[RMDB]
RNA sequence: GGGAACGACUCGAGUAGAGUCGAAAACAAAAUUAUAUAAGUGUCCGUGAAGGAACUCUUAUAUAAAACAGCCAAACUUAGCCAAUGGCUUAACACAAUUUUGGGCAUCACAAUGCACUGACCAUUUGAAUGUUAUUCUUAUUCUAGGCAGGCCAAACAUACUGAUAGCAUUCGUGCUAUCAGUAUGAAAAGAAACAACAACAACAAC
Reactivity to 2A3 in 0.01 (KOAc 150mM, MgCl2 10mM, bicine 150mM(pH8.5), 24C), signal-to-noise 4, nucleotides 027 to 156: c010a010a160a110a070u070u000a010u000a000u000a010a010g000u000g020u020c020c020g060u100g300a200a130g020g010a110a110c000u010c000u050u000a000u010a000u010a000a040a010a030c070a010g010c010c000a030a080a090c070u080u090a010g040c000c030a030a080u050g000g000c000u020u050a060a010c040a000c020a110a120u060u090u030u150g040g010g000c000a020u210c020a060c080a120a200u140g000c050a050c100u070g030a140c010c010a030u050u040u060g100a100a060u040g030u080u090a080u100u000c040u080u070a080u060u030c010u020a020g030g000c040a010g030g000c020c010a060a070a030
Reactivity to DMS in 0.01 (KOAc 150mM, MgCl2 10mM, bicine 150mM(pH8.5), 24C), signal-to-noise 2, nucleotides 027 to 156: c020a070a070a150a160u000u010a030u010a020u020a000a030g020u010g000u000c010c020g060u020g040a250a300g000g010a000a030c000u000c010u000u000a020u000a010u000a020a010a060a150c060a140g030c030c000a070a090a100c020u000u000a000g020c190c050a110a070u000g010g000c000u010u000a020a010c020a030c000a040a300u000u010u000u020g010g000g000c030a050u000c040a110c090a140a110u000g020c140a140c160u000g010a040c010c010a060u000u010u000g000a240a040u000g020u000u000a040u010u000c000u010u000a070u020u000c030u000a040g030g010c090a080g030g010c010c030a060a090a220